[RMDB]
Source information: This 177-nucleotide RNA was probed chemically with DMS and 2A3. The data come from the RNA Mapping Database (RMDB), library RFMREP. The reactions ran in a buffer of 150 mM KOAc, 10 mM MgCl2 and 150 mM bicine (pH 8.5), at 24 C. Values cover nucleotides 27 to 126.
RNA sequence: GGGAACGACUCGAGUAGAGUCGAAAACACUAUCAUCAGGGGUUUCUUUCGGCCUUCAGCUGUUUAGACUGUAGGCCGGCGGAAACUACUUGCUGAUGGUGAAAAGGUUAGUAGUUCGCUACUAACCCUUACACUACUCCUUCGGGAGUAGUGUAAGAAAAGAAACAACAACAACAAC
Reactivity to DMS in 0.01 (KOAc 150mM, MgCl2 10mM, bicine 150mM(pH8.5), 24C), signal-to-noise 1, nucleotides 027 to 126: c010a010c000u000a000u000c000a000u000c020a010g010g000g010g000u010u000u000c000u000u000u000c000g010g020c000c000u010u010c000a000g020c020u010g000u000u010u010a050g020a080c000u000g010u000a020g010g000c000c000g020g000c060g010g000a010a010a010c000u000a030c000u000u000g000c100u000g000a010u000g000g030u010g000a050a050a080a120g010g010u000u000a010g010u000a010g010u010u010c260g010c000u000a010c000u010a010a000c000c010
Reactivity to 2A3 in 0.01 (KOAc 150mM, MgCl2 10mM, bicine 150mM(pH8.5), 24C), signal-to-noise 1, nucleotides 027 to 126: c010a010c000u000a000u000c000a000u000c000a000g000g040g000g000u000u000u000c000u000u020u010c020g000g020c000c000u010u010c000a000g000c000u010g100u190u080u100a090g100a300c000u010g010u020a010g000g000c030c000g000g000c000g000g000a060a000a020c000u090a020c000u010u000g030c000u000g000a000u010g020g000u030g000a090a080a020a010g000g000u000u000a010g000u000a000g000u010u080c230g000c140u000a010c010u000a010a000c000c010